An RNA of 207 nucleotides, treated with 2A3 and DMS and read out base by base.
The reactions ran in a buffer of 150 mM KOAc, 10 mM MgCl2 and 150 mM bicine (pH 8.5), at 24 C.
For DMS, 1,540 sequencing reads were counted.
Source: RMDB library RSTRND, as collected in RNAgym.
For 2A3 the reverse transcriptase was SuperScript II with manganese.
RNA sequence: GGGAACGACUCGAGUAGAGUCGAAAAAGCGGGCGAGUGUUGGCCGCACUUCUACUCUGAGUGAACGCGGCAACUGAUAAACGCAACCGACACGGAUGCAACGGUGACCGACGCCGAGAUCGAGGCCUUCUUUGCUGAAGAGGCUGCCGCUCUCGUCGCCUAUCACUUAGUUCGCUAAGUGAUAGGCAAAAGAAACAACAACAACAAC
Reactivity to 2A3 in 0.01 (KOAc 150mM, MgCl2 10mM, bicine 150mM(pH8.5), 24C), signal-to-noise 3, nucleotides 027 to 156: a000g060c070g000g040g000c040g040a030g060u100g040u060u120g080g070c000c010g000c000a010c010u040u010c020u030a030c020u040c060u150g030a010g030u050g020a050a010c050g000c000g000g000c010a010a010c030u020g020a100u170a080a090a010c100g030c040a030a040c010c000g120a100c030a070c150g040g000a010u090g000c020a040a030c020g030g000u010g010a090c020c040g040a070c040g000c020c010g020a010g000a030u070c030g020a050g000g020c010c020u220u150c000u100u090u110g130c080u100g030a060a000g010a030g070g000c010u040g070c060c000g040c010u020c000u000c000g060u040c080
Reactivity to DMS in 0.01 (KOAc 150mM, MgCl2 10mM, bicine 150mM(pH8.5), 24C), signal-to-noise 1, nucleotides 027 to 156: a130g000c030g040g020g020c020g000a050g080u000g040u000u020g000g000c030c010g000c000a050c030u000u040c000u010a040c010u010c040u010g020a190g010u010g030a000a110c060g030c030g020g070c010a070a110c020u020g000a110u000a050a180a100c030g000c040a070a120c000c020g000a210c050a300c000g000g040a160u000g030c020a150a070c040g000g010u010g000a000c030c000g030a210c030g000c050c010g020a050g000a030u000c010g070a300g030g000c000c030u020u000c000u000u000u010g000c150u000g030a070a100g000a190g010g030c020u010g000c030c030g010c060u010c020u000c030g000u000c110